[RMDB]
RNA sequence: GGGAACGACUCGAGUAGAGUCGAAAAGAUAUGGAGUAGCGACGACGGAAUCACGAAUGCAAGUUAUCCUCUCGGAAACGAGAGAAUAAUGAUGACCAUUCGUGAUUCCAUCAGCUACUCCUAAGUCCAAGGAAUAGGACUUCGGUCCUAUUCCUUGAAAAGAAACAACAACAACAAC
Reactivity to DMS in 0.01 (KOAc 150mM, MgCl2 10mM, bicine 150mM(pH8.5), 24C), signal-to-noise 5, nucleotides 027 to 126: g020a120u010a300u000g000g000a020g020u000a000g000c000g010a110c300g010a010c050g010g000a010a010u000c000a000c000g000a010a000u000g010c020a040a140g000u000u000a000u000c010c000u000c000u000c000g010g010a120a080a220c010g000a010g000a030g010a000a000u000a010a000u000g010a060u000g000a150c300c000a010u000u010c000g010u000g000a000u000u000c000c000a020u000c010a100g000c000u000a000c000u000c000c000u000a020a060g020u010c030
Reactivity to 2A3 in 0.01 (KOAc 150mM, MgCl2 10mM, bicine 150mM(pH8.5), 24C), signal-to-noise 1, nucleotides 027 to 126: g070a010u120a060u260g000g020a010g000u010a000g000c060g280a300c190g020a010c040g110g000a010a010u020c000a000c010g030a010a000u030g000c040a040a240g000u030u000a000u000c010c000u040c000u000c000g000g050a090a140a070c020g020a010g010a000g020a000a010u040a020a000u090g300a250u100g040a030c010c030a020u000u000c000g000u020g010a000u000u000c000c000a000u000c000a000g000c000u000a000c000u010c000c000u000a000a000g000u000c020